An RNA of 207 nucleotides, treated with 2A3 and read out base by base. The reactions ran in a buffer of 150 mM KOAc, 10 mM MgCl2 and 150 mM bicine (pH 8.5), at 24 C.
RNA sequence: GGGAACGACUCGAGUAGAGUCGAAAAUGGCAAAGCUUGUAGUAUAACUAAAUUGGAAAUGAGUCUACAAAAUAAAUGAAAACACAAAAACAUAUUAUAGAAUCAGUAUGUCCCUUACUGCACCCUUUUUGGGAUUAUUAUAAAUUGGGAAAAACAGACAAUCAUAGCCAUUCGUGGCUAUGAUUGUAAAAGAAACAACAACAACAAC
Reactivity to 2A3 in 0.01 (KOAc 150mM, MgCl2 10mM, bicine 150mM(pH8.5), 24C), signal-to-noise 1, nucleotides 027 to 156: u160g040g000c050a050a010a000g020c000u010u070g010u040a000g010u060a030u040a260a030c050u130a110a120a200u230u120g030g020a070a100a100u060g000a050g010u060c020u010a010c050a010a090a000a020u140a070a100a000u140g080a020a040a100a020c080a000c000a060a070a060a130a000c060a100u240a040u080u210a080u100a160g120a080a110u070c000a010g010u040a020u070g010u020c000c000c000u000u010a010c040u030g010c020a120c010c000c010u000u170u030u240u050g000g000g020a010u130u000a000u060u060a040u220a120a140a100u110u060g000g000g000a050a000a120a000a000c070a060g120
Reactivities are given for positions 27 through 156.